[RMDB]
RNA sequence: GGGAACGACUCGAGUAGAGUCGAAAAGAUAUGGAAUGUGUGUAGGGAGCUCGAUUGUGUCGGAAACGACAUAGAGAGCGAGGAUCUACACCAUUCCUAAGUCAAAAUCCAAGGUUCGCCUUGGAAACAGUGUGUGAAAGUUCGCUUUCACACACUGAAAAGAAACAACAACAACAAC
Reactivity to DMS in 0.01 (KOAc 150mM, MgCl2 10mM, bicine 150mM(pH8.5), 24C), signal-to-noise 3, nucleotides 027 to 126: g010a060u000a300u000g010g000a010a010u000g020u000g000u000g000u010a020g000g010g000a060g020c000u000c000g000a300u020u020g020u000g000u020c000g000g010a110a100a200c010g000a020c000a010u010a020g010a300g010a010g030c000g010a050g010g000a020u010c000u000a000c000a010c000c000a010u000u000c000c000u010a030a040g020u000c030a100a060a120a140u000c000c000a000a030g000g020u000u010c300g020c030c000u000u000g010g000a020a090a210
Reactivity to 2A3 in 0.01 (KOAc 150mM, MgCl2 10mM, bicine 150mM(pH8.5), 24C), signal-to-noise 2, nucleotides 027 to 126: g030a010u050a000u160g000g030a010a010u010g300u020g000u000g000u090a000g020g000g010a050g000c020u000c000g170a220u110u300g020u000g020u000c000g030g050a070a060a080c010g000a000c000a010u050a010g200a000g000a000g000c000g020a110g000g000a000u020c000u010a000c000a000c010c000a010u000u000c000c000u000a020a000g010u000c010a030a000a000a300u010c000c000a000a020g020g030u070u180c300g180c030c000u000u000g000g000a010a010a020

The record gives the reactivity of an RNA of 177 nucleotides to DMS and 2A3. For 2A3 the reverse transcriptase was SuperScript II with manganese. The reactions ran in a buffer of 150 mM KOAc, 10 mM MgCl2 and 150 mM bicine (pH 8.5), at 24 C. The DMS profile rests on 2,880 reads.